Chemical mapping of a 177-nucleotide RNA with 2A3 and DMS. For 2A3, 2,257 sequencing reads were counted. The data come from the RNA Mapping Database (RMDB), library OK2TRN. In probing experiments dimethyl sulfate is read out at A N1 and C N3, which are open when not base-paired. DMS adducts were read by reverse transcription with MarathonRT. The RNA was probed in 150 mM KOAc, 10 mM MgCl2 and 150 mM bicine (pH 8.5) at 24 C.
[RMDB]
RNA sequence: GGGAACGACUCGAGUAGAGUCGAAAAUCUGUGAUAAAAACCAUACUGUAGGUUUAGCAGGUGUCAUGGGAAGUUUGGAUUCUUCCUUCAAUGAAACAACUACAGACAUUAUUUUAGAAGCCGCAUAGCUUACACUUAAGUUCGCUUAAGUGUAAGCAAAAGAAACAACAACAACAAC
Reactivity to 2A3 in 0.01 (KOAc 150mM, MgCl2 10mM, bicine 150mM(pH8.5), 24C), signal-to-noise 3, nucleotides 027 to 126: u020c010u000g030u050g080a140u130a140a130a000a040a010c030c010a040u070a100c030u080g030u060a040g000g020u050u050u090a060g010c050a010g050g050u020g030u050c010a010u050g030g000g100a010a010g010u110u190u180g210g050a170u160u060c010u000u020c020c000u040u050c030a090a080u050g040a060a060a040c010a050a030c060u110a020c030a020g130a040c020a110u130u270a150u110u230u050u110a150g050a090a030g080c060c020g070c120a050u160a120
Reactivity to DMS in 0.01 (KOAc 150mM, MgCl2 10mM, bicine 150mM(pH8.5), 24C), signal-to-noise 3, nucleotides 027 to 126: u000c040u010g010u000g020a150u010a050a040a090a080a080c090c040a070u010a180c020u000g000u010a030g000g000u000u020u000a070g020c080a030g000g020u000g000u000c040a000u030g000g000g000a000a010g010u000u020u000g010g010a210u010u000c020u000u000c020c010u000u000c100a090a040u000g000a060a050a060c050a050a080c040u000a020c030a030g010a210c140a070u010u010a120u000u000u010u000a070g010a110a150g010c070c060g000c160a090u000a090